[RMDB]
RNA sequence: GGGAACGACUCGAGUAGAGUCGAAAAAACCGGCAUCGCCGACGCGACAUCAAGCCACCGCACCUGCUGGUGGUGCACCGCUGACCCGACAGGGAUACCUCGAAGAACUGAAUGGACUGGUCGCUAAGAUCGGUUCCCAUCGACUCGACGGGUCACCGUCCUGUGGGUCUUUCGAGACCCACAGGACAAAAGAAACAACAACAACAAC
Reactivity to 2A3 in 0.01 (KOAc 150mM, MgCl2 10mM, bicine 150mM(pH8.5), 24C), signal-to-noise 2, nucleotides 027 to 156: a000a000c050c010g020g080c070a100u090c040g000c040c020g030a010c000g070c030g040a110c030a070u060c060a010a120g020c000c000a030c000c000g030c030a150c060c140u210g040c080u170g000g000u010g000g000u020g000c010a030c050c090g050c090u060g040a030c000c010c040g010a040c050a090g000g040g040a030u130a120c000c020u080c060g090a140a100g000a110a140c170u220g100a170a120u070g000g020a010c000u080g000g000u030c010g020c090u090a180a000g030a080u000c020g050g000u030u100c050c010c000a020u050c020g000a020c020u000c000g010a000c040g060g000g000u000c000a020c020c010

The data come from the RNA Mapping Database (RMDB), library OK3TST. The record gives the reactivity of an RNA of 207 nucleotides to 2A3. Values cover nucleotides 27 to 156.